An RNA of 177 nucleotides, treated with DMS and 2A3 and read out base by base. Conditions: 150 mM KOAc, 10 mM MgCl2 and 150 mM bicine (pH 8.5), 24 C. For 2A3, 4,511 sequencing reads were counted. Values cover nucleotides 27 to 126. The data come from the RNA Mapping Database (RMDB), library OK2TST.
RNA sequence: GGGAACGACUCGAGUAGAGUCGAAAAGGUUACACACAUCGCUCACUGUGCUCACGAUGUUACGUGCGUAUUCGUGUAGACCGUAGUUCAUCGAGUUGGAUGACUGGCUACGAGUACCAUCGUAGUAUGAAAAUGCAUGGUUCGCCAUGCAUUUUCAAAAAGAAACAACAACAACAAC
Reactivity to DMS in 0.01 (KOAc 150mM, MgCl2 10mM, bicine 150mM(pH8.5), 24C), signal-to-noise 5, nucleotides 027 to 126: g020g010u000u010a070c110a090c100a080c070a070u010c060g000c040u010c050a070c100u010g010u000g010c060u010c060a100c100g010a080u000g020u000u000a020c040g030u000g010c140g010u000a030u000u000c050g000u010g020u010a030g000a080c010c020g020u010a100g010u000u000c010a010u010c030g010a200g010u010u010g010g010a030u000g010a040c050u010g020g000c010u000a010c010g000a040g010u000a070c060c040a080u000c010g000u000a030g010u000a100
Reactivity to 2A3 in 0.01 (KOAc 150mM, MgCl2 10mM, bicine 150mM(pH8.5), 24C), signal-to-noise 4, nucleotides 027 to 126: g040g010u110u090a020c060a000c010a000c020a080u060c060g030c030u040c020a040c040u080g010u030g040c030u060c010a080c070g090a080u100g020u090u050a020c010g000u020g040c050g010u040a030u030u050c010g010u020g030u080a050g080a190c000c010g030u050a040g020u110u050c010a020u010c040g100a140g300u200u120g220g000a010u010g010a010c030u040g020g010c000u000a000c000g000a000g010u010a070c020c010a020u050c030g010u000a010g000u020a100